[RMDB]
RNA sequence: GGGAACGACUCGAGUAGAGUCGAAAAAUCCCGGGCAACGUGGUGCCCGAGGAGAUCCUGACCGAGCACCCGGAUCGGUUUCGGGCGAUGAUCGUAGAGAGGGGCAAUCCGGCUCACUCGCUGGCCGGGCAUUUGCUUCCUUCGGGAAGCAAAUGCCAAAAGAAACAACAACAACAAC
Reactivity to 2A3 in 0.01 (KOAc 150mM, MgCl2 10mM, bicine 150mM(pH8.5), 24C), signal-to-noise 1, nucleotides 027 to 126: a040u050c030c000c010g000g000g050c120a170a100c240g270u220g000g080u010g170c000c000c000g000a040g000g050a060g000a000u020c000c000u010g120a050c050c050g020a000g000c000a140c000c100c000g070g000a040u030c110g080g000u040u130u030c000g110g000g040c030g080a090u180g020a050u050c040g030u060a000g090a000g000a000g030g000g030g010c040a000a000u080c030c010g030g000c040u070c100a090c000u030c020g120c100u010g000g040c000c000g020
An RNA of 177 nucleotides, treated with 2A3 and read out base by base. For 2A3 the reverse transcriptase was SuperScript II with manganese. The 2A3 profile rests on 423 reads. It was measured as part of the RMDB library OK1LIB. High 2A3 reactivity points to a flexible backbone, as in loops and unpaired stretches.